[RMDB]
RNA sequence: GGGAACGACUCGAGUAGAGUCGAAAAACCCCAGAAACCAUUCCUUAUACCUUGAGUAUUGCUGAAUUCAGUUUAGCGUGCAUGCUCUUGGCUAUUCUCAUAGUGAUUGUCUAAUUUGGAGUUACUUAAAACACGACACCCUUCGGGGUGUCGUGAACAUUGGAACCUAGUUCGCUAGGUUCCAAUGAAAAGAAACAACAACAACAAC
Reactivity to 2A3 in 0.01 (KOAc 150mM, MgCl2 10mM, bicine 150mM(pH8.5), 24C), signal-to-noise 1, nucleotides 027 to 156: a000c030c010c000c000a030g160a080a100a020c040c000a060u090u210c010c010u110u120a010u000a070c000c000u000u010g000a000g000u010a050u150u140g010c010u020g020a160a150u140u220c070a260g130u000u120u170a010g010c010g020u040g010c010a000u010g000c000u020c010u020u010g030g000c010u040a020u100u030c090u040c080a100u160a080g090u050g090a130u090u130g110u050c050u130a160a200u070u030u180g010g030a070g000u040u020a130c010u040u060a030a100a000a000c040a000c000g020a000c000a000c000c020c030u000u090c220g080g000g000g020u000g000u000c000g000u000g000a000a010